[RMDB]
RNA sequence: GGGAACGACUCGAGUAGAGUCGAAAAGUACCUUCUCAGUACACCACAUCUCAAAGGUCCUUCAUGGUAGCAUUGGCUAGCGCAAUCGGAAUUAAGAUAGUUCACAUUAUGAAUGAACCUUCAGCAGCGUUAUUUGCAUCAGUUAGUAGUAUACCUAAACAAUGCUUGGUUUCGACCAAGCAUUGUUAAAAGAAACAACAACAACAAC
Reactivity to DMS in 0.01 (KOAc 150mM, MgCl2 10mM, bicine 150mM(pH8.5), 24C), signal-to-noise 2, nucleotides 027 to 156: g060u010a070c020c010u000u000c040u010c010a110g010u010a070c050a050c020c040a060c050a070u010c010u020c070a050a110a100g030g050u000c000c030u000u010c060a100u000g010g010u010a090g010c040a150u000u010g050g000c000u000a060g000c020g020c080a120a100u010c070g020g010a100a110u010u000a070a130g010a040u000a050g000u000u000c040a070c020a120u000u020a160u010g030a090a060u000g010a040a040c020c040u010u020c020a120g040c080a120g010c060g010u000u000a080u000u000u000g000c000a070u000c000a040g000u000u010a050g020u000a040g010u000a060u000a050c020c050u010a090
Reactivity to 2A3 in 0.01 (KOAc 150mM, MgCl2 10mM, bicine 150mM(pH8.5), 24C), signal-to-noise 4, nucleotides 027 to 156: g020u030a020c000c000u120u090c070u050c030a010g050u050a040c020a030c030c010a060c010a140u050c070u030c110a160a080a030g030g000u040c010c000u080u080c020a050u050g020g040u090a020g030c050a080u020u160g140g000c020u010a010g010c010g020c090a040a130u100c100g070g050a050a030u120u110a070a070g050a120u110a060g020u000u050c020a030c020a100u160u300a060u300g070a080a030u040g010a030a030c000c010u030u070c050a050g000c000a000g000c070g030u070u040a120u120u090u050g000c010a020u000c020a020g040u020u080a010g000u000a000g030u010a020u010a140c010c020u070a040
Overview
Structure probing data (DMS and 2A3) for a 207-nucleotide construct. The RNA was probed in 150 mM KOAc, 10 mM MgCl2 and 150 mM bicine (pH 8.5) at 24 C. Values cover nucleotides 27 to 156.